The record gives the reactivity of an RNA of 207 nucleotides to 2A3 and DMS. For DMS, 1,783 sequencing reads were counted. It was measured as part of the RMDB library M2RFPK. The reactions ran in a buffer of 150 mM KOAc, 10 mM MgCl2 and 150 mM bicine (pH 8.5), at 24 C. For 2A3, 893 sequencing reads were counted.
[RMDB]
RNA sequence: GGGAACGACUCGAGUAGAGUCGAAAAGCCAUGAGUCGCAACGCAAAGCCGCGGCAAGUGGAGUUAGCGAGAAGAGACUAGGCUUUGGUUUCUUCAAGUGAAGCGGUCACCAAUCAGGUGUGCUAGUAGGAGCCUGCAUGGUUCGCCAUGCAGGCAAUCCACAUCACUUGUUCGCAAGUGAUGUGGAAAAAGAAACAACAACAACAAC
Reactivity to 2A3 in 0.01 (KOAc 150mM, MgCl2 10mM, bicine 150mM(pH8.5), 24C), signal-to-noise 1, nucleotides 027 to 156: g050c000c000a000u010g030a010g000u000c000g000c070a030a040c050g000c090a220a240a000g100c070c050g000c010g010g030c020a070a000g020u030g000g030a060g030u080u070a000g020c020g020a030g000a050a020g030a020g000a000c030u040a030g070g110c030u210u150u090g030g000u000u000u030c000u000u010c000a010a040g020u050g060a110a000g000c020g040g030u080c010a000c020c000a040a240u230c120a170g000g010u000g040u120g010c010u030a140g040u050a050g040g190a030g040c030c000u000g000c000a000u000g010g000u010u010c040g030c060c000a000u000g000c030a000g020g010c000a000a000
Reactivity to DMS in 0.01 (KOAc 150mM, MgCl2 10mM, bicine 150mM(pH8.5), 24C), signal-to-noise 1, nucleotides 027 to 156: g040c020c000a020u030g010a300g040u010c010g020c010a040a070c010g000c030a220a180a300g040c000c040g120c010g000g000c040a060a270g010u010g010g000a110g040u000u000a290g000c000g040a300g010a040a050g040a060g010a020c010u000a040g010g010c120u010u010u000g010g000u000u010u000c010u000u000c010a030a300g000u000g020a060a180g000c000g020g010u010c030a070c000c010a140a120u000c140a070g000g000u000g010u010g040c040u010a040g000u000a090g010g000a170g000c000c000u010g000c000a030u000g020g020u010u000c300g050c020c000a000u000g000c020a000g010g040c000a020a020